[RMDB]
The record gives the reactivity of an RNA of 177 nucleotides to 2A3. High 2A3 reactivity points to a flexible backbone, as in loops and unpaired stretches. The data come from the RNA Mapping Database (RMDB), library RFM100. The 2A3 profile rests on 327 reads. 2A3 adducts were read by reverse transcription with SuperScript II with manganese.
RNA sequence: GGGAACGACUCGAGUAGAGUCGAAAACGCUAUGCUAACCUGCAGCGAAUUACAUCGACUGAUAUUAAUAUAAAAAUAGAUGUACACGUUCAACGACUAGCGAGUGAUGUAAAUCAGUCAAAUAAUCCUGCCUCUGUCCAUUCGUGGACAGAGGCAGAAAAGAAACAACAACAACAAC
Reactivity to 2A3 in 0.01 (KOAc 150mM, MgCl2 10mM, bicine 150mM(pH8.5), 24C), signal-to-noise 1, nucleotides 027 to 126: c120g040c000u100a000u180g000c000u000a000a000c000c000u130g010c000a000g000c000g080a000a000u260u080a000c070a120u070c000g000a000c000u020g150a000u000a040u120u080a300a280u030a020u140a200a000a100a000a000u070a180g000a000u000g000u000a000c000a000c070g020u040u090c030a160a120c090g010a000c000u040a000g100c000g030a000g000u030g070a160u070g120u070a000a000a130u050c000a000g000u000c080a050a050a050u030a000a000u070c070